The record gives the reactivity of an RNA of 177 nucleotides to DMS. The RNA was probed in 150 mM KOAc, 10 mM MgCl2 and 150 mM bicine (pH 8.5) at 24 C. It was measured as part of the RMDB library OK2TRN. For DMS the reverse transcriptase was MarathonRT. DMS (dimethyl sulfate) methylates the pairing face of unpaired adenines and cytosines.
RNA sequence: GGGAACGACUCGAGUAGAGUCGAAAAGAUUUGCCCUUCGAGCUGAUCGCGCGGCGGCAGAUCGAGCACCGUGCGGCGCGCGACGUCGUGCUCGGGAUCGACGUGGAUCAGCGCGUCGAGCACGCGAAAUUAGUCCCGCGUUCGCGCGGGACUAAUUAAAAGAAACAACAACAACAAC
Reactivity to DMS in 0.01 (KOAc 150mM, MgCl2 10mM, bicine 150mM(pH8.5), 24C), signal-to-noise 1, nucleotides 027 to 126: g000a080u000u000u000g010c010c010c010u010u000c000g000a080g030c000u000g040a060u000c070g010c010g020c040g000g010c300g010g010c100a060g000a130u010c020g010a140g000c060a070c040c030g010u000g000c030g020g030c030g020c030g010c180g010a040c000g040u010c050g020u000g000c020u000c040g010g050g000a150u000c110g030a030c010g040u000g000g030a080u020c070a060g000c010g000c000g010u000c010g000a060g040c000a010c070g000c130g000a080